[RMDB]
RNA sequence: GGGAACGACUCGAGUAGAGUCGAAAACUCGCGACCCCAUUGAGGCGUGGGGAGCGACAUGAAUCAGCCUCGAUUAGAUGUGGUCGACGGUACGGCGGCGUACAGCGACCUAGUUAGAAGCCGCAAAACCGGAAGAGAUGACGCUCGACGGACGUCAGCUAAAUAAAUAUUUCGAUAUUUAUUUAGCAAAAGAAACAACAACAACAAC
Reactivity to DMS in 0.01 (KOAc 150mM, MgCl2 10mM, bicine 150mM(pH8.5), 24C), signal-to-noise 3, nucleotides 027 to 156: c050u000c010g000c000g020a170c020c000c000c010a070u000u020g040a110g040g000c080g000u000g000g010g000g020a300g000c000g020a070c080a080u000g020a130a210u000c060a100g010c000c020u000c010g010a210u000u020a090g010a180u000g030u020g020g020u000c020g020a080c050g030g030u010a040c040g030g010c070g010g030c010g030u000a120c030a150g010c030g010a060c030c040u000a030g030u000u000a130g010a070a190g020c000c010g040c000a070a030a090a100c020c030g010g010a120a120g010a140g000a140u000g000a010c020g050c040u000c010g010a120c080g010g010a040c000g010u000c000a100
Reactivity to 2A3 in 0.01 (KOAc 150mM, MgCl2 10mM, bicine 150mM(pH8.5), 24C), signal-to-noise 6, nucleotides 027 to 156: c020u020c000g020c010g050a300c000c000c010c000a000u030u100g030a010g000g020c000g000u010g000g010g000g010a000g010c020g040a030c030a140u300g110a150a100u130c050a050g030c010c000u010c010g010a110u120u210a100g090a170u120g060u100g090g030u010c030g010a130c020g020g020u020a030c050g040g030c010g020g020c000g010u040a010c020a020g000c010g020a080c010c030u000a020g000u020u010a050g010a170a010g010c000c010g000c000a050a070a060a100c020c000g020g050a100a010g040a030g020a050u110g030a010c020g000c060u030c040g070a040c050g060g020a020c020g010u030c030a010